[RMDB]
RNA sequence: GGGAACGACUCGAGUAGAGUCGAAAAGUAGAAUCUGUCAAGCAAAACCCCAAAACCUUACACUGAGAGCAUUUAGCCUGAUUACUCUUUAAAUCAAAUCAGUCAAUAGAGAGAAACUCGAGAGGUGAAACGGGAGUAAUGUUCGCAUUACUCCCAAGUUAUAUUGCGUCUUCGGACGCAAUAUAACAAAAGAAACAACAACAACAAC
Reactivity to 2A3 in 0.01 (KOAc 150mM, MgCl2 10mM, bicine 150mM(pH8.5), 24C), signal-to-noise 3, nucleotides 027 to 156: g090u060a040g060a090a040u050c060u090g080u110c060a000a060g030c030a080a070a070a160c020c000c000c020a030a090a010a070c050c020u070u100a040c050a030c110u080g030a010g010a010g070c020a040u080u100u060a010g010c020c000u020g010a030u050u030a040c010u020c010u090u160u140a050a110a080u140c080a040a040a040u010c010a020g040u040c010a040a110u140a040g050a000g000a000g040a090a050a030c020u000c030g060a080g000a020g050g080u030g020a130a090a000c050g000g000g000a000g000u000a000a000u000g010u010u050c150g010c070a000u000u000a000c000u000c000c000c000a000a000
Reactivity to DMS in 0.01 (KOAc 150mM, MgCl2 10mM, bicine 150mM(pH8.5), 24C), signal-to-noise 1, nucleotides 027 to 156: g010u000a090g000a170a120u000c040u020g020u000c000a070a080g000c040a080a070a190a220c010c010c000c020a000a070a110a130c070c000u000u010a080c080a040c070u010g030a080g060a080g060c010a150u000u000u000a070g020c040c020u000g080a130u000u000a040c030u030c020u000u000u000a130a050a120u040c120a090a100a110u000c040a110g020u010c040a040a010u000a080g010a160g020a080g020a010a130a080c040u000c060g020a030g020a030g000g010u020g000a060a100a100c080g030g010g020a030g060u000a000a030u000g000u000u000c220g070c060a010u000u000a010c000u000c000c000c000a000a020

The data come from the RNA Mapping Database (RMDB), library M2RFPK. The record gives the reactivity of an RNA of 207 nucleotides to 2A3 and DMS. The 2A3 profile rests on 1,676 reads. 2A3 adducts were read by reverse transcription with SuperScript II with manganese. Conditions: 150 mM KOAc, 10 mM MgCl2 and 150 mM bicine (pH 8.5), 24 C.